This 177-nucleotide RNA was probed chemically with 2A3 and DMS. The RNA was probed in 150 mM KOAc, 10 mM MgCl2 and 150 mM bicine (pH 8.5) at 24 C.
RNA sequence: GGGAACGACUCGAGUAGAGUCGAAAAGGGAGGACUUCUGUGUAGAGUAAUGUCUUCCAGACAUGACAUAGUCAUUGCUUUUAUGAACUCAAGGUAGCUGUGGUUAUUGGCAUAAGACCUGCAUAGAAUGCGUAAUGAUCUUCGGAUCAUUACGCAUAAAAGAAACAACAACAACAAC
Reactivity to 2A3 in 0.01 (KOAc 150mM, MgCl2 10mM, bicine 150mM(pH8.5), 24C), signal-to-noise 2, nucleotides 027 to 126: g050g000g010a020g040g000a000c020u040u000c030u050g170u050g070u150a050g000a060g150u090a110a060u060g000u000c000u030u000c020c000a000g020a010c070a050u070g000a010c000a040u120a040g030u050c010a030u000u080g020c040u110u080u040u090a150u200g070a070a040c020u020c130a060a010g120g000u010a020g010c030u030g000u030g030g040u040u050a090u020u140g000g000c020a030u010a110a040g030a070c000c020u040g030c020a030u060a090g090a080
Reactivity to DMS in 0.01 (KOAc 150mM, MgCl2 10mM, bicine 150mM(pH8.5), 24C), signal-to-noise 3, nucleotides 027 to 126: g010g030g010a060g000g000a100c020u000u010c020u010g030u000g020u010a060g000a080g000u010a100a050u000g010u000c000u000u000c030c050a130g010a090c130a030u000g000a060c040a100u000a090g020u000c020a030u010u000g010c020u000u010u000u020a120u010g000a050a060c090u000c080a030a080g000g000u000a050g010c030u000g010u000g000g010u000u010a060u000u000g010g010c020a060u010a100a070g010a090c020c030u010g030c060a050u000a050g000a100